[RMDB]
RNA sequence: GGGAACGACUCGAGUAGAGUCGAAAAAAGUUUAUUUCUAUUGAUGGUAUAGCUGAUCUUGUAGAAAAUACUAAUGAUAUACUAAUGAGUGCUGCUAUUGCUUCUAAGGUAUUAAAAUGGACUGACGAAAACGGAAUACACUUACAUACGGUUAUUCGAUGAACUUGUUGUUCGCAACAAGUUCAUCAAAAGAAACAACAACAACAAC
Reactivity to DMS in 0.01 (KOAc 150mM, MgCl2 10mM, bicine 150mM(pH8.5), 24C), signal-to-noise 2, nucleotides 027 to 156: a070a100g010u000u000u000a050u020u000u010c030u020a120u010u010g000a120u010g010g000u010a050u000a070g020c040u000g000a160u000c080u010u010g020u010a090g010a050a130a130a100u010a070c030u000a110a190u020g000a090u000a080u010a090c030u000a090a100u010g020a090g010u000g030c050u010g060c030u000a060u000u010g010c020u000u000c020u020a080a090g050g020u000a040u010u010a030a040a030a020u000g030g000a100c050u000g020a160c070g040a060a020a030a120c060g000g010a080a080u010a030c030a060c050u010u000a070c090a050u020a080c040g020g030u010u000a160u010u010c090
Reactivity to 2A3 in 0.01 (KOAc 150mM, MgCl2 10mM, bicine 150mM(pH8.5), 24C), signal-to-noise 2, nucleotides 027 to 156: a000a010g130u110u060u020a100u030u110u000c070u030a110u080u040g020a030u080g060g020u080a040u040a080g030c010u020g030a050u030c010u070u040g020u040a060g080a040a130a050a040u120a040c050u100a080a030u160g050a030u030a020u020a200c030u040a130a000u100g010a030g090u040g010c040u020g030c000u050a040u060u120g030c010u040u010c010u030a030a070g020g000u030a090u040u120a120a070a010a030u020g080g000a010c030u050g020a030c070g030a040a000a000a070c010g000g040a030a000u090a030c070a000c040u060u100a020c010a110u080a040c040g100g000u040u040a070u070u160c040
The record gives the reactivity of an RNA of 207 nucleotides to DMS and 2A3. The DMS profile rests on 2,670 reads. The RNA was probed in 150 mM KOAc, 10 mM MgCl2 and 150 mM bicine (pH 8.5) at 24 C.